An RNA of 177 nucleotides, treated with DMS and 2A3 and read out base by base.
RNA sequence: GGGAACGACUCGAGUAGAGUCGAAAACUCAAGCAUUUAAACGGUUUUAACACUUCAUCCACAGAGGUAUGAAACUAGUCCUUGGUCAAGUGCAUUUUCCACCUAUCAGAGAAACAUCUAGUGAGGGCGCAGCAAGAGAGUUCGCUCUCUUGCUGCGAAAAGAAACAACAACAACAAC
Reactivity to DMS in 0.01 (KOAc 150mM, MgCl2 10mM, bicine 150mM(pH8.5), 24C), signal-to-noise 1, nucleotides 027 to 126: c030u000c010a200a120g000c050a020u020u000u010a020a130a110c120g000g020u000u000u000u000a060a090c160a000c010u000u000c030a040u010c010c070a060c140a110g010a020g040g010u000a070u000g010a010a050a030c060u000a040g010u020c020c020u000u000g010g000u000c020a010a060g040u010g010c060a090u000u010u000u000c000c020a030c040c040u000a080u000c120a100g010a090g040a140a080a170c110a040u010c020u000a040g030u010g000a130g000g000g010
Reactivity to 2A3 in 0.01 (KOAc 150mM, MgCl2 10mM, bicine 150mM(pH8.5), 24C), signal-to-noise 1, nucleotides 027 to 126: c030u000c060a050a020g020c060a100u120u080u250a230a210a010c020g030g030u010u040u040u000a090a040c030a000c000u060u030c010a090u010c010c030a050c020a090g080a020g020g050u060a100u150g040a060a060a000c000u060a030g060u120c020c060u080u070g140g060u030c020a100a000g000u010g010c010a080u050u030u000u040c000c010a030c030c000u040a050u120c000a010g050a000g000a060a300a020c010a140u010c010u080a060g010u000g030a050g000g040g020
The RNA was probed in 150 mM KOAc, 10 mM MgCl2 and 150 mM bicine (pH 8.5) at 24 C. DMS adducts were read by reverse transcription with MarathonRT. For 2A3, 788 sequencing reads were counted.